An RNA of 177 nucleotides, treated with 2A3 and DMS and read out base by base. As a SHAPE reagent, 2A3 marks flexible, mostly unpaired nucleotides at the ribose 2'-OH. It was measured as part of the RMDB library OK2TST. 2A3 adducts were read by reverse transcription with SuperScript II with manganese.
RNA sequence: GGGAACGACUCGAGUAGAGUCGAAAAAUAACAGGCACAGAAACUGUUUUCUUAGCUGUUUCUACAAGUUUAAGAUAUGCUUCGGGGCCUACUCCAUAAGGGCCUGAGGCAAUAUUAUCUAUGGGUAGUAUCAGGGGAUAUUCGUAUCCCCUGAUACAAAAGAAACAACAACAACAAC
Reactivity to 2A3 in 0.01 (KOAc 150mM, MgCl2 10mM, bicine 150mM(pH8.5), 24C), signal-to-noise 1, nucleotides 027 to 126: a000u070a010a010c000a010g150g030c050a070c040a210g250a160a180a010c020u010g000u050u070u050u000c010u030u020a070g030c050u020g080u020u050u040c000u060a060c040a020a060g000u070u180u120a050a000g040a020u060a020u080g000c000u000u000c000g000g030g000g050c010c000u040a030c050u050c080c010a090u120a130a070g000g010g100c000c000u000g010a000g050g000c050a010a020u020a030u050u020a020u030c040u040a080u170g060g080g070u020a040
Reactivity to DMS in 0.01 (KOAc 150mM, MgCl2 10mM, bicine 150mM(pH8.5), 24C), signal-to-noise 2, nucleotides 027 to 126: a020u010a000a000c020a020g020g020c110a150c200a180g010a140a090a070c030u010g000u000u010u000u000c020u020u010a050g020c040u000g020u000u000u020c040u010a130c080a090a060g020u010u010u010a060a080g000a080u000a040u000g020c010u010u000c000g020g000g010g000c000c000u000a110c160u000c170c110a040u010a110a080g010g010g000c000c000u000g000a010g000g000c010a020a010u000a060u010u000a010u010c040u010a060u000g010g030g020u000a070